RNA sequence: GGGAACGACUCGAGUAGAGUCGAAAAACGGCCAGAGCCGCUACGGCGCGCCGCACUGACAUUGCUGCGACCCGUGGCACCAUCAGUCGUGGUACGGAGAACUCCACGCUGGGAAACCUGCCCUGAAUAGUCCGUUCCCGGCCAAAUCCAACGUGCGAAAUUAGCACGUAUUCGUACGUGCUAAUUUAAAAGAAACAACAACAACAAC
Reactivity to DMS in 0.01 (KOAc 150mM, MgCl2 10mM, bicine 150mM(pH8.5), 24C), signal-to-noise 2, nucleotides 027 to 156: a000c060g000g000c020c050a120g020a110g030c020c050g000c070u000a030c040g040g000c100g020c090g030c020c010g000c000a040c140u050g040a100c160a180u000u000g000c040u000g020c010g010a060c030c020c020g040u020g020g020c010a140c100c030a160u020c030a120g010u000c060g020u000g000g050u000a250c050g040g000a200g000a070a090c040u000c000c000a000c020g030c000u000g070g060g000a150a060a110c040c040u020g000c010c000c020u000g000a080a080u010a100g000u020c070c010g020u000u000c000c010c010g050g030c060c040a100a060a080u000c020c010a040a090c060g020u000g000c040g000
Reactivity to 2A3 in 0.01 (KOAc 150mM, MgCl2 10mM, bicine 150mM(pH8.5), 24C), signal-to-noise 3, nucleotides 027 to 156: a000c010g000g010c030c010a030g010a030g070c060c130g010c010u000a000c020g010g020c020g000c000g000c120c010g040c010a020c040u150g070a060c030a120u120u090g000c000u020g020c010g070a300c020c000c000g010u000g000g010c020a020c020c010a050u120c010a010g120u150c010g010u020g020g000u050a080c080g130g070a140g040a140a020c020u020c010c000a010c020g010c000u010g000g000g030a030a100a070c010c050u070g010c020c000c010u010g060a150a150u080a190g030u070c020c000g000u010u020c000c000c000g020g020c020c040a050a050a090u080c050c030a050a030c080g090u140g020c030g040